[RMDB]
RNA sequence: GGGAACGACUCGAGUAGAGUCGAAAAGGUGGGGCAGUCAAGUGGUGGCUGCACCACAGCCUGCUGGCUUUGUCUGAGCAGCUGGCGCAGCGUGGUGUGCGUCUGCAUGUGCUCUCCGGCGACCCACUCUCGUGUAUAAAUUCGUUUAUACACGAGAAAAAGAAACAACAACAACAAC
Reactivity to 2A3 in 0.01 (KOAc 150mM, MgCl2 10mM, bicine 150mM(pH8.5), 24C), signal-to-noise 9, nucleotides 027 to 126: g130g000u030g000g010g010g000c010a000g010u020c020a060a160g110u090g280g200u060g060g050c010u010g000c000a010c000c000a000c000a000g060c000c010u040g020c020u020g030g090c040u160u140u230g120u100c110u100g010a000g000c010a000g000c020u030g010g000c020g000c020a060g060c080g130u230g100g130u240g090u040g070c010g010u030c020u030g020c030a060u180g050u070g110c000u010c010u000c020c010g020g010c020g030a070c010c000c000a040c020
Reactivity to DMS in 0.01 (KOAc 150mM, MgCl2 10mM, bicine 150mM(pH8.5), 24C), signal-to-noise 9, nucleotides 027 to 126: g010g030u000g000g000g000g010c010a010g010u000c010a080a240g030u010g020g020u000g010g010c020u000g010c010a010c000c010a010c010a070g010c060c030u000g010c050u000g010g010c210u000u000u010g010u010c150u010g000a040g020c020a080g000c010u000g000g010c020g010c020a030g000c070g020u000g010g010u010g020u000g010c010g010u000c010u000g010c020a100u010g020u000g010c010u000c010u000c030c030g000g010c030g000a170c040c010c010a110c190
The record gives the reactivity of an RNA of 177 nucleotides to 2A3 and DMS. The RNA was probed in 150 mM KOAc, 10 mM MgCl2 and 150 mM bicine (pH 8.5) at 24 C. For 2A3, 49,058 sequencing reads were counted.